[RMDB]
RNA sequence: GGGAACGACUCGAGUAGAGUCGAAAACGUCCCCGUCGUACAGAAUGGUAACAUAUCUCUCCAAAUAUCUGAGCUUGGGUAUACGUGGAAACCCAACCCCUUGGGAAGAUUGGGUAUAUGGCUAAAUUACAUCGAUUGUACUUCGGUACAAUCGAAACUAUAAUUCCACGUUCGCGUGGAAUUAUAGAAAAGAAACAACAACAACAAC
Reactivity to 2A3 in 0.01 (KOAc 150mM, MgCl2 10mM, bicine 150mM(pH8.5), 24C), signal-to-noise 7, nucleotides 027 to 156: c040g100u040c020c000c000c010g120u100c030g000u050a070c040a100g090a150a130u110g060g020u090a130a030c020a040u110a070u040c050u010c020u020c070c020a080a100a060u150a090u050c040u050g040a010g050c030u030u030g020g000g020u060a080u040a120c100g040u080g050g030a100a070a040c010c010c010a010a030c000c020c000c020u040u070g030g000g010a020a040g030a080u060u070g010g000g010u020a030u010a010u060g020g000c020u060a060a090a100u180u120a050c040a090u020c000g000a000u000u000g000u000a000c000u030u050c160g050g000u000a000c000a000a000u000c000g000a010a000a000
Reactivity to DMS in 0.01 (KOAc 150mM, MgCl2 10mM, bicine 150mM(pH8.5), 24C), signal-to-noise 3, nucleotides 027 to 156: c050g020u000c010c010c000c080g020u000c100g030u000a170c100a080g010a160a140u000g010g000u010a100a140c060a080u000a070u000c030u000c020u000c020c030a030a090a210u000a050u000c100u000g010a080g000c070u000u000g020g020g020u000a070u000a050c090g000u000g020g010a150a090a090c010c000c010a030a030c020c010c030c060u000u000g010g000g030a150a050g010a110u000u000g010g030g020u000a090u000a030u010g010g010c010u010a060a050a090u010u010a080c090a180u010c010g020a030u000u000g020u000a010c000u000u000c280g060g000u010a000c000a000a010u000c000g000a000a010a090